An RNA of 177 nucleotides, treated with 2A3 and DMS and read out base by base. Conditions: 150 mM KOAc, 10 mM MgCl2 and 150 mM bicine (pH 8.5), 24 C. It was measured as part of the RMDB library OK2TRN. For DMS, 4,081 sequencing reads were counted. DMS adducts were read by reverse transcription with MarathonRT.
RNA sequence: GGGAACGACUCGAGUAGAGUCGAAAAGACACGACGGAGACGUCGUGUCAAAGAGUGGGAAACCACUCAAAGAGCCACAGCUUCGGCUGUGGCUCAAGGCGUGGCACCGUCCUCGGAAAAAACGGAAGCUAAUUUUAUAGUUCGCUAUAAAAUUAGCAAAAGAAACAACAACAACAAC
Reactivity to 2A3 in 0.01 (KOAc 150mM, MgCl2 10mM, bicine 150mM(pH8.5), 24C), signal-to-noise 3, nucleotides 027 to 126: g000a010c000a000c030g010a000c010g020g020a060g040a050c000g000u000c000g000u000g010u000c000a000a000a000g000a000g000u020g010g000g010a020a040a080c010c000a000c010u000c000a030a050a010g000a000g020c000c000a000c000a000g030c000u070u090c260g120g010c000u000g010u000g010g010c010u010c000a000a000g000g010c010g010u020g010g010c040a020c080c020g070u140c000c020u040c040g150g110a080a070a020a010a010a020c040g010g010a050a000
Reactivity to DMS in 0.01 (KOAc 150mM, MgCl2 10mM, bicine 150mM(pH8.5), 24C), signal-to-noise 4, nucleotides 027 to 126: g000a010c010a000c010g010a020c000g010g010a300g000a230c010g020u010c000g020u000g010u000c000a030a060a110g000a020g020u000g010g010g000a130a140a190c000c000a010c000u000c010a040a110a080g000a020g010c000c000a010c000a010g010c000u000u010c240g040g000c000u000g020u000g010g000c000u000c000a010a040g000g000c040g010u000g000g000c060a160c020c020g000u000c010c010u000c010g020g000a000a050a050a040a040a030c040g010g000a110a160